[RMDB]
Conditions: 150 mM KOAc, 10 mM MgCl2 and 150 mM bicine (pH 8.5), 24 C. Structure probing data (DMS and 2A3) for a 177-nucleotide construct. For DMS, 7,061 sequencing reads were counted. The 2A3 profile rests on 11,991 reads. DMS adducts were read by reverse transcription with MarathonRT. 2A3 adducts were read by reverse transcription with SuperScript II with manganese.
RNA sequence: GGGAACGACUCGAGUAGAGUCGAAAAGGUUCGCACUUCGGUGCGAACCAAAGGCUAAGCAAUAAAUAUCAGCUUGUUCGCUAAGGCACUAACGAGCAGAAAAAACCGUUUGGUUCGCCAAACGGAACACUUCUUACAAGUUCGCUUGUAAGAAGUGAAAAGAAACAACAACAACAAC
Reactivity to DMS in 0.01 (KOAc 150mM, MgCl2 10mM, bicine 150mM(pH8.5), 24C), signal-to-noise 5, nucleotides 027 to 126: g020g010u010u000c000g010c000a000c000u000u010c180g040g020u000g010c000g010a000a000c000c000a010a040a050g000g010c070u000a040a100g010c090a070a090u010a070a080a110u010a110u010c080a080g010c040u000u000g010u010u000c160g000c020u000a050a100g020g000c060a100c110u010a030a040c040g010a030g000c020a100g000a000a050a060a070a100a100c010c000g020u000u000u000g000g010u000u010c180g010c010c000a010a010a010c000g000g010a040a080
Reactivity to 2A3 in 0.01 (KOAc 150mM, MgCl2 10mM, bicine 150mM(pH8.5), 24C), signal-to-noise 6, nucleotides 027 to 126: g000g000u000u020c000g010c000a010c000u040u080c230g100g000u000g000c000g010a000a000c000c000a000a010a000g000g010c040u100a030a060g030c030a120a120u120a210a120a050u210a140u110c040a020g020c010u030u020g010u030u050c020g000c040u060a080a200g120g000c040a020c080u060a040a010c020g000a010g000c030a040g120a030a110a010a010a010a030c010c000g000u000u000u000g020g020u020u050c170g010c040c000a000a010a000c000g000g000a000a010